[RMDB]
RNA sequence: GGGAACGACUCGAGUAGAGUCGAAAAAGCACGAAUACUUCGAUCUGGUGGAAGCCACGGUGAUGCGCGACAUGGGCGAGCGCAUCACCAUCGACCCGGACCAGCGUGCGUGGUACGUGGCCACCAAGCCAAGGGGAUAUUUCGAUAUCCCCUUGGCAAAAGAAACAACAACAACAAC
Reactivity to DMS in 0.01 (KOAc 150mM, MgCl2 10mM, bicine 150mM(pH8.5), 24C), signal-to-noise 2, nucleotides 027 to 126: a080g020c030a010c020g000a210a190u000a000c160u040u000c040g000a110u030c090u000g010g000u000g000g010a170a060g000c030c060a100c180g000g010u000g000a000u000g000c000g000c030g000a080c060a270u000g000g000g020c160g010a200g000c000g000c000a000u000c020a020c000c000a030u010c060g000a170c020c020c040g010g020a070c030c000a040g000c170g010u000g010c050g010u000g010g030u020a050c030g030u000g030g020c010c020a060c050c000a160a100
Reactivity to 2A3 in 0.01 (KOAc 150mM, MgCl2 10mM, bicine 150mM(pH8.5), 24C), signal-to-noise 2, nucleotides 027 to 126: a020g020c010a000c030g090a200a060u130a240c050u100u140c080g160a180u030c050u020g070g000u010g000g050a140a040g050c040c000a010c010g020g010u020g000a000u000g050c000g000c010g050a070c060a180u290g110g100g120c180g050a020g000c000g010c000a000u000c000a000c000c000a000u020c000g040a010c000c000c070g020g060a020c000c030a040g110c080g050u080g040c010g000u020g020g000u030a040c040g010u110g030g050c000c000a010c010c000a000a060